[RMDB]
RNA sequence: GGGAACGACUCGAGUAGAGUCGAAAACACCUUCAUUAUCCUCACUUUGAACCUGUUAGGCAACUUGGUCUAGAGUAGCAGAAGGAUUUGAAACUCAGGUGAGCCAAAGGUAUCGCUGAAACUGCCCCACAUGAUAAAAAUUCGUUUUUAUCAUGUGAAAAGAAACAACAACAACAAC
Reactivity to 2A3 in 0.01 (KOAc 150mM, MgCl2 10mM, bicine 150mM(pH8.5), 24C), signal-to-noise 6, nucleotides 027 to 126: c050a050c010c000u050u040c040a080u050u160a050u070c010c010u040c010a040c030u060u030u090g030a030a040c000c010u030g050u140u080a100g130g000c050a060a080c070u090u120g060g000u010c010u040a010g000a010g050u060a030g070c060a020g030a210a020g070g010a020u050u020u070g050a060a040a020c040u030c080a030g050g030u030g040a020g010c010c010a120a070a020g070g010u080a130u160c050g000c020u010g010a080a080a080c030u060g020c000c000c000
Reactivity to DMS in 0.01 (KOAc 150mM, MgCl2 10mM, bicine 150mM(pH8.5), 24C), signal-to-noise 9, nucleotides 027 to 126: c110a110c050c020u000u000c030a060u010u000a070u000c040c010u000c080a070c050u000u000u000g010a070a050c040c010u000g000u000u000a120g010g020c120a070a070c060u000u000g010g010u000c040u000a060g000a050g010u000a070g020c140a070g010a110a060g010g010a080u000u000u000g010a060a060a100c130u000c100a070g010g010u000g010a090g010c030c050a040a070a080g010g010u000a040u000c060g010c040u000g010a050a060a090c100u000g000c010c010c040
Chemical mapping of a 177-nucleotide RNA with 2A3 and DMS. The RNA was probed in 150 mM KOAc, 10 mM MgCl2 and 150 mM bicine (pH 8.5) at 24 C. Reactivities are given for positions 27 through 126.